An RNA of 177 nucleotides, treated with DMS and 2A3 and read out base by base. For DMS the reverse transcriptase was MarathonRT. Reactivities are given for positions 27 through 126. The DMS profile rests on 22,090 reads. It was measured as part of the RMDB library OK1LIB.
RNA sequence: GGGAACGACUCGAGUAGAGUCGAAAAGGAGAGCGAGGGGAGAGCACAGCCACCCGCCUCGGCGGCCCGGGACUCGGCUCGACUCGCCGGAGAAUGCGCCCGAGGACGACGGGGCGCCAGAGCCGCGCCGUAGCUAAAAAUUCGUUUUUAGCUACGGAAAAGAAACAACAACAACAAC
Reactivity to DMS in 0.01 (KOAc 150mM, MgCl2 10mM, bicine 150mM(pH8.5), 24C), signal-to-noise 7, nucleotides 027 to 126: g020g010a070g000a090g010c060g000a090g010g000g000g000a080g000a070g000c070a070c100a080g000c030c030a090c100c080c020g010c020c010u010c060g000g020c000g000g000c010c020c060g000g000g000a130c030u010c040g000g010c010u020c110g030a120c080u020c100g010c010c020g000g000a070g010a130a100u020g000c150g000c040c000c000g000a120g000g000a050c050g000a030c010g000g010g000g030c000g010c050c050a060g000a130g000c020c030g000c110g000
Reactivity to 2A3 in 0.01 (KOAc 150mM, MgCl2 10mM, bicine 150mM(pH8.5), 24C), signal-to-noise 8, nucleotides 027 to 126: g070g010a050g000a020g030c040g010a070g000g030g030g010a080g010a010g040c020a030c020a080g020c010c000a050c030c010c010g020c010c000u020c030g030g000c010g000g010c000c000c000g000g010g010a040c040u030c040g010g020c020u050c060g080a090c050u050c100g030c010c010g030g010a090g060a110a100u240g050c110g030c060c000c010g030a220g030g020a030c040g000a010c020g010g010g000g020c010g000c000c000a020g000a010g030c010c010g020c010g000
In probing experiments dimethyl sulfate is read out at A N1 and C N3, which are open when not base-paired. 2A3 adducts were read by reverse transcription with SuperScript II with manganese.